[RMDB]
Conditions: 150 mM KOAc, 10 mM MgCl2 and 150 mM bicine (pH 8.5), 24 C. Structure probing data (DMS and 2A3) for a 177-nucleotide construct.
RNA sequence: GGGAACGACUCGAGUAGAGUCGAAAACGGAUCGGACACGACCGAAGGAGCGUCAGCCAAUCAAUAGCCCGCACUAAUGACAGGCGCGGCCCACAGCUAGGCGGGCACAGCCGCUGCAGAGUGCCUGGCUAAGCACGCCAUUCGUGGCGUGCUUAGCAAAAGAAACAACAACAACAAC
Reactivity to DMS in 0.01 (KOAc 150mM, MgCl2 10mM, bicine 150mM(pH8.5), 24C), signal-to-noise 2, nucleotides 027 to 126: c000g070g000a030u000c050g070g000a110c160a090c080g080a080c010c000g000a110a130g020g000a060g020c080g000u000c100a010g000c070c020a220a080u070c150a030a030u020a050g000c070c010c080g030c160a120c090u050a030a130u020g000a150c220a080g000g000c040g000c030g000g050c030c010c070a110c000a110g020c010u010a150g000g000c000g010g000g040c000a040c030a050g000c020c010g000c050u000g000c050a000g000a120g040u000g020c040c020u000g020
Reactivity to 2A3 in 0.01 (KOAc 150mM, MgCl2 10mM, bicine 150mM(pH8.5), 24C), signal-to-noise 2, nucleotides 027 to 126: c030g040g010a080u020c010g020g010a000c030a020c120g110a060c040c010g030a060a040g070g000a080g000c060g060u060c040a000g010c000c030a010a140u070c040a050a070u080a070g020c000c000c000g000c020a090c050u110a180a090u140g040a020c000a040g060g010c000g000c030g020g000c030c000c000a060c030a010g020c070u090a030g030g010c000g000g030g000c010a010c000a000g030c000c000g030c030u050g010c020a020g040a030g060u050g010c000c000u000g030
DMS adducts were read by reverse transcription with MarathonRT.
High 2A3 reactivity points to a flexible backbone, as in loops and unpaired stretches.